[RMDB]
An RNA of 207 nucleotides, treated with DMS and 2A3 and read out base by base.
The DMS profile rests on 7,405 reads.
Reactivities are rounded to 0.1 and cut off at 0 and 3.
RNA sequence: GGGAACGACUCGAGUAGAGUCGAAAAAUUCGACAUCACCCCGGAGCCGAUUUCGGCUUGUCGGCUUGGCGUCCGUGCAGCACGUGAUGUCGGUGUGACGGUUACAGGCGCUUUCGAUGAUGCGUCUGCAUCAAUGUUAGGCGGAGUUACGGUUACGUAUCGAUGUCAAAUUCGUUUGACAUCGAUAAAAAGAAACAACAACAACAAC
Reactivity to DMS in 0.01 (KOAc 150mM, MgCl2 10mM, bicine 150mM(pH8.5), 24C), signal-to-noise 2, nucleotides 027 to 156: a190u000u000c020g020a040c020a020u000c020a060c020c050c020c030g010g020a030g010c010c020g030a280u000u000u010c020g020g000c070u000u000g010u000c030g070g020c060u010u010g020g030c060g010u000c030c040g000u010g000c090a160g020c060a080c040g000u010g010a030u000g000u010c010g010g020u010g020u000g000a040c000g000g000u000u000a040c010a070g020g000c010g020c010u000u000u010c040g000a200u020g030a080u000g010c010g020u000c090u000g010c020a030u000c030a040a130u000g000u000u000a080g010g020c000g010g000a180g000u010u000a050c020g000g000u000u000a090c060g010
Reactivity to 2A3 in 0.01 (KOAc 150mM, MgCl2 10mM, bicine 150mM(pH8.5), 24C), signal-to-noise 3, nucleotides 027 to 156: a010u110u040c000g010a000c000a020u000c010a030c010c000c000c000g030g000a000g000c000c000g060a050u090u190u160c070g080g040c070u030u080g060u040c000g020g000c020u050u110g080g020c050g070u020c010c020g080u160g040c050a030g020c020a040c100g020u010g000a000u010g000u000c000g010g020u070g000u020g010a040c070g070g000u040u120a020c010a030g270g000c040g000c000u020u070u090c110g080a110u140g010a010u040g030c030g110u130c210u130g000c010a010u030c010a020a080u090g040u100u070a050g050g000c010g030g020a070g000u020u050a010c020g000g000u040u000a010c060g020